[RMDB]
RNA sequence: GGGAACGACUCGAGUAGAGUCGAAAACGGGGUUGGCUAUAGUUGAUUUCGAACCGUAUGCUUAUGUAUAUGGAAUGAUUUGUACGCUUUACGCAUGUGUACACUCACUCUCAGUUCACUCUUGUGAGAGAAGGGAGAGAGAGAUAUUUUGCGAUUAGGAAAGUGGGAUCUUCGGAUUCUGCUUUUCAAAAGAAACAACAACAACAAC
Reactivity to 2A3 in 0.01 (KOAc 150mM, MgCl2 10mM, bicine 150mM(pH8.5), 24C), signal-to-noise 1, nucleotides 027 to 156: c050g020g000g020g000u040u080g090g000c060u070a010u020a100g020u000u020g060a130u090u000u020c020g020a030a010c010c010g000u000a010u020g000c020u220u040a070u220g030u010a020u000a010u030g000g020a070a040u050g030a060u100u030u040g010u000a000c010g000c010u010u090u050a010c020g000c000a010u020g010u010g000u020a000c010a000c000u010c000a040c000u000c000u000c010a060g030u030u020c010a030c020u040c000u080u150g050u190g040a010g000a010g000a020a040g060g010g000a000g000a000g000a000g000a000g000a010u010a040u080u080u050u030g020c010g040a050u040u120a030
Reactivity to DMS in 0.01 (KOAc 150mM, MgCl2 10mM, bicine 150mM(pH8.5), 24C), signal-to-noise 1, nucleotides 027 to 156: c070g040g020g040g030u020u000g010g030c080u000a120u000a100g030u000u010g000a110u000u000u000c030g040a050a220c000c020g030u000a030u000g020c030u010u020a080u020g050u000a030u000a040u000g030g010a090a100u000g010a080u010u000u050g040u010a050c080g010c020u010u010u000a170c080g030c040a050u010g000u020g000u000a040c010a110c070u010c000a120c020u000c010u000c020a080g030u000u010c040a120c010u000c020u000u000g020u000g000a060g010a080g010a060a120g000g000g010a050g000a070g020a040g020a020g000a120u010a030u000u000u010u000g020c020g010a130u000u000a160

Conditions: 150 mM KOAc, 10 mM MgCl2 and 150 mM bicine (pH 8.5), 24 C.
This 207-nucleotide RNA was probed chemically with 2A3 and DMS.
It was measured as part of the RMDB library OK3TST.
2A3 adducts were read by reverse transcription with SuperScript II with manganese.